[RMDB]
RNA sequence: GGGAACGACUCGAGUAGAGUCGAAAACAACUCUAAGCGCACUGAGUUCGCUCUCGCUGCUUGAUCGAGAGUGACUCUGUCGGCCUGGGAGCGUCUCCGACCCAGUGUCCGGCAUCGUUGAGGAGACUUGCCGGUCAGAUCAGGCCACAGGAUCUGAGCCUAGAUACUGGUUCGCCAGUAUCUAGGCAAAAGAAACAACAACAACAAC
Reactivity to 2A3 in 0.01 (KOAc 150mM, MgCl2 10mM, bicine 150mM(pH8.5), 24C), signal-to-noise 2, nucleotides 027 to 156: c010a050a020c000u050c030u200a160a090g090c090g000c120a130c110u040g000a010g000u280u180c030g000c000u010c000u020c000g030c060u120g030c050u120u190g090a100u250c030g000a000g000a000g020u000g000a000c000u000c000u010g010u000c000g010g000c000c000u000g000g000g000a050g040c070g000u000c010u010c000c020g010a040c000c000c000a020g000u020g040u080c000c000g070g000c010a100u040c020g040u080u140g120a030g030g000a010g010a010c020u020u160g010c010c020g000g060u080c000a000g000a040u020c000a000g000g070c110c030a090c090a070g110g000a000u000c000u020g000a020